[RMDB]
RNA sequence: GGGAACGACUCGAGUAGAGUCGAAAAGAGACGUUCGACGCGGCGAGCCUCGAGCUCGUCGACGAUCUGACGCGCGACGCCGACAUGCACGACCAGGUGCGCGCGAAGCUGUACAAGGCGCUCGGCUACGCGACGCAGGCCGCCGCGCCGGCGCGCGGAGAGAAUAGUCUUUCGAGACUAUUCUCUCAAAAGAAACAACAACAACAAC
Reactivity to 2A3 in 0.01 (KOAc 150mM, MgCl2 10mM, bicine 150mM(pH8.5), 24C), signal-to-noise 3, nucleotides 027 to 156: g060a000g000a030c060g060u140u110c010g090a010c000g010c000g000g000c020g010a030g000c000c080u090c060g010a060g020c060u040c020g000u060c010g010a010c000g000a090u050c030u040g030a040c000g020c000g000c000g060a140c010g020c010c030g050a080c080a130u300g050c110a100c130g100a090c090c080a050g020g020u000g000c020g030c000g000c000g000a040a010g090c090u130g030u180a080c070a150a070g090g000c010g020c130u040c000g040g000c020u020a020c090g000c010g090a080c010g040c070a020g010g020c010c000g030c030c020g000c000g000c000c000g000g010c000g000c020g060c050g010
Structure probing data (2A3) for a 207-nucleotide construct. 2A3 adducts were read by reverse transcription with SuperScript II with manganese. The RNA was probed in 150 mM KOAc, 10 mM MgCl2 and 150 mM bicine (pH 8.5) at 24 C.